[RMDB]
RNA sequence: GGGAACGACUCGAGUAGAGUCGAAAAGAUGCUGUAAAAGUUAUUAGUGCUAUGAGUAAGCUUUAUAUGACUGUUUCAGUUAGUUAACAAUAAGAAAGGAGAAUAAUAAUGGCACAACAAAUAAAAGCAAGAGAUACAAUAAGUGCAUCUAAGGCAGGACGAAGUAUAGCUUCGGCUAUACUUCGUCAAAAGAAACAACAACAACAAC
Reactivity to DMS in 0.01 (KOAc 150mM, MgCl2 10mM, bicine 150mM(pH8.5), 24C), signal-to-noise 2, nucleotides 027 to 156: g020a100u010g020c040u000g050u010a090a090a060a070g020u000u000a010u000u000a120g050u000g020c010u000a070u000g000a200g000u010a140a120g010c030u000u000u000a080u000a140u010g010a030c060u030g000u000u000u010c060a120g040u000u010a090g010u000u000a080a100c050a050a140u000a110a150g000a060a040a120g020g000a120g020a120a120u000a050a120u000a060a100u010g030g000c020a040c000a020a140c000a000a080a090u000a070a060a020a060g020c040a060a180g000a050g000a080u000a030c060a080a120u010a070a100g010u000g010c020a030u000c030u000a080a130g030g000c020a040g000
Reactivity to 2A3 in 0.01 (KOAc 150mM, MgCl2 10mM, bicine 150mM(pH8.5), 24C), signal-to-noise 3, nucleotides 027 to 156: g040a010u060g000c020u020g020u120a060a040a050a070g080u050u090a100u060u090a090g030u030g040c030u030a040u090g060a070g120u110a070a030g000c010u080u090u040a160u050a050u130g070a010c020u020g020u120u160u160c030a020g020u010u070a010g020u050u140a110a050c040a120a100u100a110a050g080a120a060a000g050g040a090g040a060a030u110a070a040u110a060a030u070g000g000c060a000c010a010a090c020a010a140a000u170a100a080a000a000g000c020a030a000g010a000g030a050u030a110c020a020a080u070a210a020g020u020g020c010a000u000c000u080a040a060g100g020c030a010g060